[RMDB]
RNA sequence: GGGAACGACUCGAGUAGAGUCGAAAAUUGUCGGCCACACGUGACUCGUCGCUGCUGUCCCACACGUAGUUGCAGUUGCGGAAACUUUUCUGCUGGUGUGAGUCUGUGGGUAAGCAAUGGUGUAAACAUGACCCAUCGAGUUCGCUCGAUGGGUCAUAAAAGAAACAACAACAACAAC
Reactivity to DMS in 0.01 (KOAc 150mM, MgCl2 10mM, bicine 150mM(pH8.5), 24C), signal-to-noise 1, nucleotides 027 to 126: u000u000g000u000c080g010g000c010c020a040c070a090c110g020u020g000a030c040u010c060g020u000c030g020c050u000g010c010u000g010u010c000c010c040a060c110a030c150g020u020a050g000u000u000g000c030a050g000u000u000g010c000g000g030a010a070a190c300u000u010u000u000c010u010g020c010u000g000g000u000g010u020g000a010g000u000c030u010g000u000g020g000g040u020a170a070g020c060a020a020u020g020g000u000g010u000a100a090a060c170
Reactivity to 2A3 in 0.01 (KOAc 150mM, MgCl2 10mM, bicine 150mM(pH8.5), 24C), signal-to-noise 1, nucleotides 027 to 126: u110u040g050u020c040g030g020c030c030a020c010a000c030g080u030g050a020c020u020c050g040u010c030g060c040u050g000c010u030g030u130c000c000c000a010c000a000c010g160u150a070g090u050u030g030c040a300g060u030u020g020c000g020g010a020a050a140c040u300u080u000u000c000u040g030c010u050g000g120u010g030u040g010a070g240u000c000u040g000u040g000g000g050u010a060a000g000c000a000a050u100g010g000u080g080u170a030a060a000c070

Structure probing data (DMS and 2A3) for a 177-nucleotide construct. DMS (dimethyl sulfate) methylates the pairing face of unpaired adenines and cytosines. Conditions: 150 mM KOAc, 10 mM MgCl2 and 150 mM bicine (pH 8.5), 24 C. The 2A3 profile rests on 948 reads. The DMS profile rests on 1,115 reads.